[RMDB]
Structure probing data (2A3 and DMS) for a 207-nucleotide construct.
Values cover nucleotides 27 to 156.
The DMS profile rests on 2,192 reads.
RNA sequence: GGGAACGACUCGAGUAGAGUCGAAAAACGAGUCCGUACGCGGACUCGAUGGGCCCCAGAAGACCAAGGGGCCCAAACCUACCACUCAUUAGAUGCAUGGAAAUCACUAGGUGAUACGUCACCUAGAACACGCUUUUAAGCUUCGGCUUAAAAGCAACUUUCUUUUAUGGUUCGCCAUAAAAGAAAGAAAAGAAACAACAACAACAAC
Reactivity to 2A3 in 0.01 (KOAc 150mM, MgCl2 10mM, bicine 150mM(pH8.5), 24C), signal-to-noise 4, nucleotides 027 to 156: a010c000g000a000g010u000c020c010g020u040a030c270g010c000g070g000a000c000u000c010g000a000u000g000g010g000c000c000c000c010a090g070a300a030g060a120c060c060a120a070g000g000g000g020c000c010c010a000a000a000c010c000u020a030c000c010a030c030u120c020a080u070u210a080g050a100u130g050c110a050u090g110g120a080a070a050u190c050a060c060u000a000g020g010u000g010a010u010a040c230g030u010c010a000c000c000u000a000g000a010a000c050a020c060g010c000u000u010u000u000a000a010g000c000u030u110c250g080g000c010u010u000a000a000a000a000g000c000a000a000
Reactivity to DMS in 0.01 (KOAc 150mM, MgCl2 10mM, bicine 150mM(pH8.5), 24C), signal-to-noise 1, nucleotides 027 to 156: a070c020g000a040g040u010c010c000g020u010a110c270g030c070g000g040a020c000u010c030g000a040u010g000g080g050c000c000c000c020a050g000a100a130g000a250c140c060a090a170g030g040g070g010c010c000c020a000a000a040c000c030u000a140c020c000a070c000u030c060a110u010u010a130g020a130u000g010c080a100u000g030g010a130a070a120u010c050a220c000u000a010g010g010u000g000a060u010a020c300g020u010c020a030c000c000u030a020g010a070a090c070a110c110g020c010u010u000u000u000a000a010g010c000u000u000c300g080g010c010u000u000a000a010a030a010g010c010a010a020